[RMDB]
RNA sequence: GGGAACGACUCGAGUAGAGUCGAAAAGAGGAGUCAUUCGUGACUCCUCAAAGGGAGCUCAACUCUCCCGCACAAGUCCGAGAGCCUUCGGACCCAAAAGAAUGCUGUUCCUGUUCGCAGGAACAAAGUUGAGUAGAGACUUCGGUCUCUACUCAACAAAAGAAACAACAACAACAAC
Reactivity to DMS in 0.01 (KOAc 150mM, MgCl2 10mM, bicine 150mM(pH8.5), 24C), signal-to-noise 2, nucleotides 027 to 126: g000a010g000g020a000g000u050c000a040u000u030c190g020u000g010a020c010u000c000c010u000c020a000a030a010g000g000g010a000g000c180u000c270a110a070c280u010c020u000c000c000c000g010c230a040c210a140a130g020u000c010c010g020a020g000a100g020c080c130u000u000c040g000g000a070c000c100c080a050a040a090a110g010a080a140u000g000c050u010g020u000u000c010c000u000g000u010u010c220g020c010a010g010g000a010a010c010a000a000a040
Reactivity to 2A3 in 0.01 (KOAc 150mM, MgCl2 10mM, bicine 150mM(pH8.5), 24C), signal-to-noise 2, nucleotides 027 to 126: g000a000g000g010a010g000u010c000a020u070u140c140g120u110g000a000c000u000c020c000u000c010a000a000a010g000g000g010a010g000c030u020c140a000a080c040u010c000u010c050c000c000g050c000a160c010a080a020g010u000c010c000g010a010g000a030g200c020c050u070u010c030g030g020a030c010c020c000a040a140a010a020g140a120a060u170g080c060u010g040u010u000c000c000u010g030u050u040c280g040c050a020g020g000a010a010c000a030a020a010